[RMDB]
RNA sequence: GGGAACGACUCGAGUAGAGUCGAAAACUGUGAGAGGUCCGAGUUACUCCUUGCAACUUGUGUUAAAGAGAAUGGUUAAUUCAAUUGAUCCGCUCACUUUGACAGAAAAUGUUACAGGGCUCUCCCCCAAGGGUCUUAGAUUCGUCUAAGACCCUUGAAAAGAAACAACAACAACAAC
Reactivity to 2A3 in 0.01 (KOAc 150mM, MgCl2 10mM, bicine 150mM(pH8.5), 24C), signal-to-noise 1, nucleotides 027 to 126: c040u030g020u140g100a030g020a000g030g110u090c040c010g000a060g030u080u140a050c010u010c060c050u000u070g000c020a100a030c050u080u050g070u000g000u090u030a010a000a000g030a010g050a080a050u040g030g060u040u140a050a020u150u120c150a090a160u100u070g030a020u030c010c000g000c010u000c000a060c010u020u000u010g000a000c010a010g170a050a070a010a060u110g040u040u010a030c020a020g000g000g040c030u060c010u010c030c010c010c030
Reactivity to DMS in 0.01 (KOAc 150mM, MgCl2 10mM, bicine 150mM(pH8.5), 24C), signal-to-noise 3, nucleotides 027 to 126: c060u000g010u020g000a070g010a100g020g000u010c070c100g010a080g020u010u000a100c160u010c000c020u000u000g030c040a010a040c030u010u000g020u000g010u000u000a010a020a030g000a080g020a010a030u010g000g010u000u000a030a050u000u000c270a110a140u000u010g000a040u000c010c020g010c060u000c030a100c010u000u000u000g000a000c010a040g000a060a060a070a070u010g010u000u000a030c020a050g010g000g020c070u000c030u010c010c020c010c050